[RMDB]
RNA sequence: GGGAACGACUCGAGUAGAGUCGAAAAGAUUAGGCAGAUAACAACUAUUACGCGUCAUGCCACUGUAUUGUAAAGUAAACAACAAGAUAUAAGUUUAAUACACCUACGCGACAAGAUGAAUCAGCAACCAACUCGUAUCUUUCGAGAUACGAGUUGGAAAAGAAACAACAACAACAAC
Reactivity to 2A3 in 0.01 (KOAc 150mM, MgCl2 10mM, bicine 150mM(pH8.5), 24C), signal-to-noise 1, nucleotides 027 to 126: g070a050u150u160a060g050g000c050a060g030a100u100a120a060c000a000a050c090u060a030u180u180a090c050g020c040g050u060c040a070u050g040c030c000a050c070u000g100u040a020u060u040g070u070a000a070a020g030u050a090a080a030c030a070a000c000a040a040g050a050u080a000u030a150a030g000u000u130u060a030a000u020a030c000a000c010c040u020a000c050g040c020g000a040c010a010a030g030a050u120g000a020a050u070c010a000g080c030a010a030
Reactivity to DMS in 0.01 (KOAc 150mM, MgCl2 10mM, bicine 150mM(pH8.5), 24C), signal-to-noise 2, nucleotides 027 to 126: g010a150u000u000a120g010g000c050a000g010a050u000a090a100c190a090a160c070u000a060u010u030a100c100g010c000g010u000c120a050u040g010c030c110a060c070u010g010u000a030u030u010g010u000a040a030a120g000u000a040a050a090c110a050a040c060a000a180g000a080u000a120u010a050a100g000u000u000u000a070a020u000a030c080a070c080c030u000a090c120g000c050g000a050c120a030a050g000a060u020g020a040a040u000c030a020g010c120a120a100